[RMDB]
An RNA of 177 nucleotides, treated with 2A3 and DMS and read out base by base. The reactions ran in a buffer of 150 mM KOAc, 10 mM MgCl2 and 150 mM bicine (pH 8.5), at 24 C. The 2A3 profile rests on 2,403 reads. It was measured as part of the RMDB library OK2TRN. The DMS profile rests on 1,441 reads.
RNA sequence: GGGAACGACUCGAGUAGAGUCGAAAACACACCUGGGGAGACUCUUCAGCAGAGCACCUUGCGGCCUUACUCCUGCACGUCUCCUGCAGUUUGUAAGGUGCAUUCAGAACUCACUGUGUGCCCAGCAAUCAUUACCUGACUUCGGUCAGGUAAUGAUAAAAGAAACAACAACAACAAC
Reactivity to 2A3 in 0.01 (KOAc 150mM, MgCl2 10mM, bicine 150mM(pH8.5), 24C), signal-to-noise 2, nucleotides 027 to 126: c010a000c000a000c010c030u010g020g000g040g030a080g080a140c040u000c000u140u060c150a070g080c090a030g010a010g090c010a060c030c040u000u040g030c010g100g040c030c010u030u010a020c000u000c020c000u020g000c000a020c060g120u030c070u070c100c000u000g020c010a040g030u120u150u130g000u010a000a010g000g010u040g000c020a020u060u100c040a010g030a130a040c000u020c010a010c070u040g000u000g010u060g020c040c000c010a030g080c080a030
Reactivity to DMS in 0.01 (KOAc 150mM, MgCl2 10mM, bicine 150mM(pH8.5), 24C), signal-to-noise 2, nucleotides 027 to 126: c020a050c080a010c160c120u020g010g000g000g000a130g020a120c040u000c040u020u000c200a100g050c230a060g000a040g010c060a140c120c050u000u010g040c020g010g010c020c000u000u000a010c030u010c300c010u000g000c010a020c180g000u000c060u000c080c030u000g000c000a030g000u010u000u000g000u000a010a010g010g000u000g000c020a080u010u000c130a110g000a090a160c030u000c040a060c140u010g000u010g000u010g000c010c010c000a100g000c190a080